[RMDB]
The record gives the reactivity of an RNA of 207 nucleotides to DMS and 2A3.
2A3 adducts were read by reverse transcription with SuperScript II with manganese.
Reactivities are given for positions 27 through 156.

RNA sequence: GGGAACGACUCGAGUAGAGUCGAAAAGCUGUGAAUAGGUAAGCCUAUAUCUGUUCGCACUACAGGCACUAUGUCGCAUCAUGGUCCCUGUGAACUCGAAGCUUGAUGCGACAAGUUUUGAGUGAUCUCAGACACUAUAGGCUUAGUUCUUGUGAGCGCUAAUAAUCCGUUUCGACGGAUUAUUAGCAAAAGAAACAACAACAACAAC
Reactivity to DMS in 0.01 (KOAc 150mM, MgCl2 10mM, bicine 150mM(pH8.5), 24C), signal-to-noise 2, nucleotides 027 to 156: g010c000u030g000u000g010a050a090u000a040g010g000u000a020a050g040c000c000u010a040u000a020u000c010u010g000u000u000c040g000c050a060c050u010a150c000a070g040g060c100a090c060u020a060u000g020u000c110g060c150a060u010c020a030u010g020g000u000c110c010c010u000g020u030g000a160a090c020u000c010g000a020a060g000c000u010u000g000a100u000g010c150g000a090c010a010a030g010u000u000u000u000g010a080g030u000g010a150u010c090u000c050a150g000a150c110a050c100u040a030u000a010g010g000c010u000u000a170g000u000u000c030u000u000g010u000g010a110g020c180
Reactivity to 2A3 in 0.01 (KOAc 150mM, MgCl2 10mM, bicine 150mM(pH8.5), 24C), signal-to-noise 5, nucleotides 027 to 156: g040c070u030g020u050g100a080a020u080a080g060g040u030a040a010g000c000c000u010a010u000a010u050c000u000g030u040u080c050g000c000a020c020u170a100c000a040g020g030c050a010c030u110a120u210g010u020c040g000c110a050u050c000a010u110g080g000u090c040c000c040u070g050u030g100a060a040c030u020c060g030a060a020g040c010u010u000g010a020u040g080c030g060a040c020a000a010g000u000u010u030u050g020a010g000u010g090a110u030c050u030c080a020g020a050c040a010c080u050a010u000a010g000g000c000u020u040a020g020u100u030c010u050u060g060u050g070a050g040c070